[RMDB]
RNA sequence: GGGAACGACUCGAGUAGAGUCGAAAAGCCACAUAUCCCGUGACAUUGCGAAAGCAAGGUUGGCGGUAGGUAGUCCUGGGCGGCGACAGCCUUGGACUGCGGCGUAAAGGUGUACCUGGGGCCGUUAUAACGCGGUAACAGUUCGCUGUUACCGCAACAUACAUUGAAGCUUCGGCUUCAAUGUAUGAAAAGAAACAACAACAACAAC
Reactivity to DMS in 0.01 (KOAc 150mM, MgCl2 10mM, bicine 150mM(pH8.5), 24C), signal-to-noise 2, nucleotides 027 to 156: g020c020c020a100c050a160u000a110u000c080c010c000g010u000g000a030c010a070u000u000g010c000g010a140a120a290g010c000a020a030g010g030u000u010g020g040c030g000g010u000a050g020g020u000a030g020u000c010c010u000g000g000g020c000g020g040c060g020a130c150a160g020c000c010u000u000g010g010a010c010u000g020c010g010g030c050g020u000a070a100a040g020g000u000g000u000a070c040c030u000g010g010g030g020c030c040g000u000u000a110u010a110a170c090g010c000g010g000u000a000a010c000a020g000u000u000c200g030c040u000g020u000u000a000c000c000g010c000a000a020
Reactivity to 2A3 in 0.01 (KOAc 150mM, MgCl2 10mM, bicine 150mM(pH8.5), 24C), signal-to-noise 5, nucleotides 027 to 156: g050c020c000a060c010a020u160a030u070c010c000c000g000u020g000a020c020a030u000u020g010c010g060a090a020a020g000c010a010a010g030g030u010u060g170g030c010g000g000u050a060g040g100u050a010g000u010c010c020u010g010g020g010c020g040g040c090g050a050c080a050g000c000c000u020u020g000g010a000c010u010g000c010g010g010c010g030u080a070a060a030g020g010u110g040u170a130c010c010u020g000g000g060g000c010c010g020u040u070a110u040a180a050c120g000c000g010g000u000a000a000c010a000g030u070u100c210g010c100u000g000u000u000a000c000c000g000c000a000a000